An RNA of 207 nucleotides, treated with 2A3 and DMS and read out base by base. The data come from the RNA Mapping Database (RMDB), library OK3TST. Values cover nucleotides 27 to 156.
[RMDB]
RNA sequence: GGGAACGACUCGAGUAGAGUCGAAAAGUGGCCAAGCGAGGCCCCAAAUUAAAUAGUGAUGCCAAAGACUGUAGGUAGGUCAUCAUCACACGCAUGCGUGAUAAAUCAUCCGCCACUGACAGGUCAUCCAGGUCUAUCCGGGCUAUCUCAUCCGGCACAUUCCCUUUAGGUUCGCCUAAAGGGAAUGAAAAGAAACAACAACAACAAC
Reactivity to 2A3 in 0.01 (KOAc 150mM, MgCl2 10mM, bicine 150mM(pH8.5), 24C), signal-to-noise 3, nucleotides 027 to 156: g120u110g020g000c000c030a070a030g120c090g080a090g000g030c010c000c000c010a030a120a070u240u190a080a070a090u150a060g000u020g000a000u030g010c040c020a090a090a070g030a020c050u060g040u150a070g100g060u030a020g000g030u040c000a040u020c000a000u000c010a020c000a010c020g090c030a040u210g030c010g050u140g050a040u080a110a180a090u150c050a020u010c020c020g000c000c020a060c040u020g010a010c030a030g030g000u050c000a020u050c020c000a020g010g010u000c040u030a100u020c050c020g000g010g040c020u040a100u130c020u000c010a030u010c010c010g000g010c040a030
Reactivity to DMS in 0.01 (KOAc 150mM, MgCl2 10mM, bicine 150mM(pH8.5), 24C), signal-to-noise 1, nucleotides 027 to 156: g020u010g000g000c030c010a060a200g030c190g020a200g030g010c020c010c030c040a050a060a160u010u010a090a090a090u020a100g000u010g020a070u000g020c000c050a060a120a090g000a060c050u000g010u000a060g040g020u000a040g040g020u020c030a200u000c090a020u000c030a010c020a030c040g000c120a100u020g010c040g000u020g020a060u020a090a070a120u000c090a070u010c010c030g020c010c020a070c020u000g000a110c120a090g010g020u010c030a080u000c030c030a150g040g000u020c010u000a040u010c070c050g020g020g020c070u010a020u000c050u000c030a080u040c000c020g050g000c070a220
DMS adducts were read by reverse transcription with MarathonRT.